The record gives the reactivity of an RNA of 177 nucleotides to 2A3 and DMS.
The DMS profile rests on 2,194 reads.
[RMDB]
RNA sequence: GGGAACGACUCGAGUAGAGUCGAAAAAUGUGGCGUAGGUCGGGGGCCCCAGAUCUUGCGCUAUGUGUUCGCUUUGGCACUAUUUAUAUGGAUUAUUAGUCAAGGGCCCGCUUAAAUGCCAGCAUACAUCAUCACGAAGAUUCGUCUUCGUGAUGAUAAAAGAAACAACAACAACAAC
Reactivity to 2A3 in 0.01 (KOAc 150mM, MgCl2 10mM, bicine 150mM(pH8.5), 24C), signal-to-noise 2, nucleotides 027 to 126: a040u030g020u010g020g020c000g030u020a000g030g040u060c230g100g020g050g030g040c000c030c010c000a000g010a020u010c000u070u090g070c060g000c000u010a060u100g070u010g020u020u190c040g010c150u130u120u130g010g000c010a020c030u030a040u060u150u030a300u030a100u130g020g030a020u060u030a040u120u090a220g040u120c030a060a060g000g000g000c030c000c030g000c000u020u050a060a120a020u130g020c000c030a030g030c010a060u040a120c040
Reactivity to DMS in 0.01 (KOAc 150mM, MgCl2 10mM, bicine 150mM(pH8.5), 24C), signal-to-noise 3, nucleotides 027 to 126: a050u020g040u000g000g010c000g010u010a030g020g030u000c070g010g010g020g010g010c030c010c000c090a160g000a010u010c010u010u000g020c110g000c090u000a030u000g000u010g020u010u020c090g040c200u000u000u000g010g000c030a070c050u000a080u010u010u000a090u010a160u030g010g000a100u000u020a100u020u010a060g010u010c090a140a110g000g010g010c000c020c030g000c060u000u010a030a050a070u010g020c010c040a050g010c100a060u000a070c190

Background
The RNA was probed in 150 mM KOAc, 10 mM MgCl2 and 150 mM bicine (pH 8.5) at 24 C. Values are in units of 0.01, from 0 to 300, in steps of 10. Source: RMDB library OK2TRN, as collected in RNAgym. For 2A3 the reverse transcriptase was SuperScript II with manganese.